[RMDB]
The record gives the reactivity of an RNA of 207 nucleotides to DMS and 2A3.
RNA sequence: GGGAACGACUCGAGUAGAGUCGAAAAGUGUGCUAUACUAGUAAGGUUGAAUGAAUCAACCCUUGGUGCUUAGCUUCUUCCACCAAGCAUAUUACACGCGGAUAACCGCCAAAGGAGAAAAGAUGAACUGCCCGACGAUUCUUCGGAAUCGUCGGAAGAUUUACUAUUGCUUCGGCAAUAGUAAAUCAAAAGAAACAACAACAACAAC
Reactivity to DMS in 0.01 (KOAc 150mM, MgCl2 10mM, bicine 150mM(pH8.5), 24C), signal-to-noise 2, nucleotides 027 to 156: g030u020g070u000g000c030u010a080u000a120c060u000a100g000u020a120a070g010g000u010u010g010a030a170u000g000a160a280u010c000a000a010c000c000c020u010u010g020g030u000g030c030u000u010a050g010c030u000u000c020u000u010c000c060a080c010c010a030a040g020c070a120u000a060u000u000a040c060a100c030g040c020g000g000a180u000a070a100c040c020g040c060c070a030a040a110g000g010a130g000a080a090a090a100g010a090u000g010a020a130c050u000g000c060c000c000g000a040c000g030a050u000u000c010u000u010c300g090g020a010a000u000c000g030u010c000g000g000a000a030
Reactivity to 2A3 in 0.01 (KOAc 150mM, MgCl2 10mM, bicine 150mM(pH8.5), 24C), signal-to-noise 5, nucleotides 027 to 156: g060u050g020u020g020c030u060a050u060a300c080u070a070g100u110a150a060g020g000u010u010g040a090a230u160g080a080a130u070c000a000a000c000c000c010u010u020g010g000u030g010c050u080u080a050g020c000u050u040c010u070u000c020c000a010c000c010a020a000g010c030a020u040a060u160u140a040c060a020c060g020c010g000g030a100u090a200a190c020c020g000c050c080a080a080a030g080g000a070g030a030a100a030a010g060a030u120g030a070a050c040u070g030c020c000c000g000a000c000g000a000u000u000c000u030u040c120g020g000a000a010u000c000g000u010c010g000g000a000a000
The DMS profile rests on 2,839 reads. Source: RMDB library M2RFPK, as collected in RNAgym. Values are in units of 0.01, from 0 to 300, in steps of 10. The reactions ran in a buffer of 150 mM KOAc, 10 mM MgCl2 and 150 mM bicine (pH 8.5), at 24 C.